[RMDB]
RNA sequence: GGGAACGACUCGAGUAGAGUCGAAAAUUGUCUGAUAAGGCAGUGCCGGGCAGCUACGCGCUAGGUGAUAAAGGCUGAAAGCAUCUAAGCCUGAGGUAUCCCCUGAAAAUAGAUUGCUUAGGACGUGUCAAUAUAAGAUUUUCGAAUCUUAUAUUGAAAAAGAAACAACAACAACAAC
Reactivity to DMS in 0.01 (KOAc 150mM, MgCl2 10mM, bicine 150mM(pH8.5), 24C), signal-to-noise 9, nucleotides 027 to 126: u010u010g010u000c010u000g010a140u040a090a080g010g010c010a040g010u010g010c030c020g000g000g010c040a050g010c040u000a050c130g010c120g010c060u010a040g010g010u000g010a060u010a060a120a050g000g000c010u000g000a100a090a120g010c080a040u010c040u010a140a090g000c010c010u000g010a070g010g010u010a090u010c020c030c000c050u010g000a060a060a080a110u010a040g010a050u010u010g010c010u000u010a110g020g000a080c090g010u010g000
Reactivity to 2A3 in 0.01 (KOAc 150mM, MgCl2 10mM, bicine 150mM(pH8.5), 24C), signal-to-noise 9, nucleotides 027 to 126: u060u020g010u000c010u030g080a120u110a240a060g020g000c010a010g030u020g100c000c010g010g030g000c010a030g010c010u050a040c040g030c000g020c090u070a030g000g030u020g010a030u050a070a120a000g020g000c000u010g060a080a050a020g060c020a020u020c020u060a020a020g010c000c000u030g010a060g060g040u060a070u050c020c000c000c000u040g070a060a030a030a020u070a020g090a090u020u100g000c000u050u050a070g030g030a020c030g090u070g010
This 177-nucleotide RNA was probed chemically with DMS and 2A3.
It was measured as part of the RMDB libraries RFM100 and RFMREP.
DMS adducts were read by reverse transcription with MarathonRT.